[RMDB]
RNA sequence: GGGAACGACUCGAGUAGAGUCGAAAAGAUAUGGAAUUAGGGCUCUUGGAUUUAUACAACACUCGGAAACGAGAAAUUGUAUUGUCAGAGCGCUAAUUCCUAAGUCAAAGACCCGUUCGCGGGUCAACUGAUAACAAUGGUUCGCCAUUGUUAUCAGAAAAGAAACAACAACAACAAC
Reactivity to DMS in 0.01 (KOAc 150mM, MgCl2 10mM, bicine 150mM(pH8.5), 24C), signal-to-noise 3, nucleotides 027 to 126: g000a050u010a300u000g000g000a020a010u000u000a000g000g010g020c010u000c000u020u020g030g000a010u010u010u000a010u000a000c000a010a010c210a270c010u000c000g000g000a080a120a180c020g020a000g010a020a060a270u000u000g010u000a010u000u000g010u000c020a030g000a010g010c000g000c000u000a000a000u000u000c000c000u010a020a070g010u000c020a100a170a170g000a020c000c000c000g000u000u010c150g010c000g010g000g000u000c000a020a040
Reactivity to 2A3 in 0.01 (KOAc 150mM, MgCl2 10mM, bicine 150mM(pH8.5), 24C), signal-to-noise 3, nucleotides 027 to 126: g020a030u070a050u140g000g010a010a010u000u010a020g100g160g020c000u020c020u080u180g230g030a060u290u300u160a000u040a000c010a010a010c030a020c120u010c000g040g000a050a090a050c020g000a010g000a130a130a010u020u000g000u010a030u000u030g020u040c020a000g010a000g010c030g000c040u000a000a000u010u000c000c000u010a030a000g010u010c020a090a160a080g030a010c010c000c000g040u100u080c300g020c020g040g000g000u000c000a000a030